This 177-nucleotide RNA was probed chemically with DMS. The data come from the RNA Mapping Database (RMDB), library RFMREP. The RNA was probed in 150 mM KOAc, 10 mM MgCl2 and 150 mM bicine (pH 8.5) at 24 C.
RNA sequence: GGGAACGACUCGAGUAGAGUCGAAAAAACGGCUUGCCUGCCCCGGAUGAACUGUUGAUAAAAAAGAGGGCCAGCAUCCGUUUCCAGACGGCCCUGAGUGGAUUGUGACGUAACAUGGCACCUUGCUGAAUACAUUGUUCUUCGGAACAAUGUAUUCAAAAGAAACAACAACAACAAC
Reactivity to DMS in 0.01 (KOAc 150mM, MgCl2 10mM, bicine 150mM(pH8.5), 24C), signal-to-noise 2, nucleotides 027 to 126: a040a040c030g010g000c080u000u000g020c040c030u000g000c060c000c020c050g020g000a160u010g000a060a190c100u000g010u010u000g020a130u030a010a100a060a090a090a160g000a100g000g000g030c010c080a060g000c040a000u000c030c000g000u000u010u000c020c010a160g010a070c110g000g010c000c000c040u010g000a060g030u000g010g010a070u010u000g010u000g020a120c070g020u000a040a060c100a060u010g000g020c030a070c090c080u000u010g000c120u010